RNA sequence: GGGAACGACUCGAGUAGAGUCGAAAAUGGUGACUGAUCAUACCCGCCAGCUGGCUAAUAUCAUAAUUAACGAAGUUGGUGCGACGUCUGCAAAGUUUAAUCGGAACAUUUACCAGCGAUGUGAUGGAGCUAUUACGAUUUUCGAAUCGUAAUAGCUAAAAGAAACAACAACAACAAC
Reactivity to DMS in 0.01 (KOAc 150mM, MgCl2 10mM, bicine 150mM(pH8.5), 24C), signal-to-noise 8, nucleotides 027 to 126: u010g000g020u000g000a060c060u010g000a120u010c060a060u010a110c030c020c020g010c040c030a050g000c010u000g000g010c060u010a040a040u020a060u020c170a090u020a080a040u010u000a040a070c060g010a090a070g040u010u000g000g020u000g010c080g010a080c100g010u010c030u010g010c080a070a070a090g010u000u010u010a040a090u010c060g010g000a140a050c050a040u010u020u000a120c040c030a050g010c040g010a040u010g010u000g010a170u030g000g010
Reactivity to 2A3 in 0.01 (KOAc 150mM, MgCl2 10mM, bicine 150mM(pH8.5), 24C), signal-to-noise 8, nucleotides 027 to 126: u070g020g010u030g030a110c040u060g050a060u040c020a020u060a120c000c000c000g000c010c000a020g000c010u030g020g000c020u060a080a010u090a060u150c120a090u050a270a110u160u090a050a050c090g040a090a030g040u050u060g040g010u050g030c010g040a040c040g030u020c020u040g030c060a070a040a070g000u050u110u150a080a070u080c030g030g020a030a020c020a080u070u090u080a060c040c020a020g000c030g070a060u030g020u030g060a060u090g040g050